[RMDB]
RNA sequence: GGGAACGACUCGAGUAGAGUCGAAAAACAUUUAAGAAUUCCUUUCUGCUGGGUGAUGGUGGUGUACACCUUUAGUCCUUGCACCUAGGAGGCAGAGGCAGAGGCAGAGACAGAGGAGGCAGAGGCAUGAGCGUUUAUAAUUCGUUAUAAACGCUCAAAAAGAAACAACAACAACAAC
Reactivity to 2A3 in 0.01 (KOAc 150mM, MgCl2 10mM, bicine 150mM(pH8.5), 24C), signal-to-noise 1, nucleotides 027 to 126: a000c070a000u230u170u220a200a110g070a150a120u080u100c000c000u040u110u080c040u040g000c030u010g020g040g060u060g050a100u120g000g020u010g010g000u140g060u180a030c040a030c000c000u030u050u060a070g010u000c000c010u030u020g030c030a040c000c030u000a040g070g020a070g060g000c080a030g000a000g090g010c020a020g020a020g060g000c040a010g010a010g000a090c010a030g040a010g050g020a000g000g060c000a000g030a030g110g030c100a070
Reactivity to DMS in 0.01 (KOAc 150mM, MgCl2 10mM, bicine 150mM(pH8.5), 24C), signal-to-noise 4, nucleotides 027 to 126: a100c080a060u010u000u020a110a110g000a130a160u010u000c000c010u000u010u000c050u000g010c020u000g010g000g030u000g010a060u010g000g010u000g010g010u010g020u010a140c050a030c020c010u000u010u010a100g000u000c010c000u000u010g010c020a050c060c050u000a080g010g010a070g000g020c050a040g000a070g010g010c070a040g010a070g000g020c050a040g000a100g000a050c090a060g000a100g000g010a080g000g010c070a030g010a070g010g010c130a120